[RMDB]
RNA sequence: GGGAACGACUCGAGUAGAGUCGAAAAUCAUAGCUUCACCAGCGCGACCUGGUCCUCCACGAGCUGGCCCGCGGCCGCGAGCUCAGGUUUUACCUUCCCGCCCACCUCCUCGCGCAGGUACACCGAAUCUGAAGUCCUAUUUCGAUAGGACUUCAGAAAAAGAAACAACAACAACAAC
Reactivity to DMS in 0.01 (KOAc 150mM, MgCl2 10mM, bicine 150mM(pH8.5), 24C), signal-to-noise 2, nucleotides 027 to 126: u000c070a110u000a080g000c070u000u000c070a090c090c040a050g000c040g010c040g000a040c080c030u010g010g020u000c020c020u000c070c040a070c110g000a100g010c060u000g020g000c030c030c050g020c090g020g010c070c050g030c120g010a040g010c010u000c040a090g010g000u000u010u000u020a080c060c050u000u000c010c010c010g010c070c020c030a030c030c020u000c030c000u000c050g020c030g010c070a060g000g000u020a050c110a160c000c050g010a070a130